[RMDB]
This 207-nucleotide RNA was probed chemically with 2A3 and DMS.
RNA sequence: GGGAACGACUCGAGUAGAGUCGAAAAUUGCGCCUCCGAUUCGCCGUCAGCAUUUCCCCAGCAGCCAUGACCUACCAGGCUGCGGUGCGGCUCGCCGCACAGGUCAUCCCUCAUCGGGCGCGUCCUGGAUAGGGCUAUACUUUCGAGUAUAGCCCAACUAUGGUACUGUAUUCGUACAGUACCAUAGAAAAGAAACAACAACAACAAC
Reactivity to 2A3 in 0.01 (KOAc 150mM, MgCl2 10mM, bicine 150mM(pH8.5), 24C), signal-to-noise 3, nucleotides 027 to 156: u110u080g020c010g010c020c020u090c030c070g070a100u080u130c060g010c040c020g050u070c050a030g000c040a090u040u040u040c010c010c000c000a020g000c020a000g000c010c010a120u130g040a050c010c010u080a190c060c030a010g000g000c010u000g000c010g000g010u010g000c000g000g030c030u030c100g140c010c010g000c000a010c020a010g020g030u030c010a090u070c050c010c000u090c040a100u070c050g020g000g000c030g010c000g030u050c000c010u000g050g000a060u070a210g030g000g000c000u010a000u000a010c010u060u080u130c240g050a010g010u000a000u000a000g020c020c000c000a000a000
Reactivity to DMS in 0.01 (KOAc 150mM, MgCl2 10mM, bicine 150mM(pH8.5), 24C), signal-to-noise 2, nucleotides 027 to 156: u000u010g020c000g010c030c010u000c040c020g010a160u010u000c020g040c000c050g010u000c020a160g030c090a170u000u000u000c030c010c010c040a100g010c040a050g000c020c010a160u000g010a120c030c030u000a190c120c070a110g020g010c040u000g020c000g030g030u010g030c010g000g000c080u010c170g030c020c000g010c050a040c010a020g000g020u000c020a170u000c020c020c010u010c060a100u000c040g020g010g020c030g000c020g010u000c030c010u000g030g020a180u000a100g030g040g060c000u010a020u000a000c000u000u000u000c210g010a060g020u000a000u000a010g010c000c000c010a010a000
Values cover nucleotides 27 to 156.